[RMDB]
Structure probing data (2A3 and DMS) for a 177-nucleotide construct.
Reactivities are given for positions 27 through 126.
DMS (dimethyl sulfate) methylates the pairing face of unpaired adenines and cytosines.
The DMS profile rests on 3,482 reads.
For DMS the reverse transcriptase was MarathonRT.
RNA sequence: GGGAACGACUCGAGUAGAGUCGAAAAAUGCAAAAGAUAUCGACAAGUACACAAUCUGAAAUUGCAAACUUCAGUGGUUUGUUAGGGCGUGUCCUAACUGAAAUGCGUCUUGUUAAAAUAUCAAAUACAAACAUGCGGUAUUCGUACCGCAUGUUUGAAAAGAAACAACAACAACAAC
Reactivity to 2A3 in 0.01 (KOAc 150mM, MgCl2 10mM, bicine 150mM(pH8.5), 24C), signal-to-noise 5, nucleotides 027 to 126: a000u170g020c030a040a050a040a060g010a000u010a010u060c050g010a000c010a010a020g130u160a020c090a010c020a030a090u080c000u040g040a040a020a030u240u190g050c080a070a100a040c040u030u010c000a030g000u080g090g070u120u190u140g000u020u020a020g010g050g010c260g120u150g070u110c000c000u000a000a010c010u080g100a030a070a070u110g000c030g030u010c000u010u030g010u050u070a090a130a090a000u020a010u030c040a050a080a010u230a080
Reactivity to DMS in 0.01 (KOAc 150mM, MgCl2 10mM, bicine 150mM(pH8.5), 24C), signal-to-noise 3, nucleotides 027 to 126: a080u010g040c230a100a080a090a060g010a000u000a010u030c170g030a000c000a020a000g020u030a000c020a120c010a070a200u050c000u000g030a000a000a060u020u080g010c280a090a050a090c150u000u000c030a090g000u010g020g000u020u010u010g000u000u000a020g000g000g010c230g090u010g000u020c000c000u010a000a030c020u000g020a040a090a080u020g000c120g020u010c010u000u000g000u000u000a010a080a080a000u000a000u000c010a040a050a110u060a130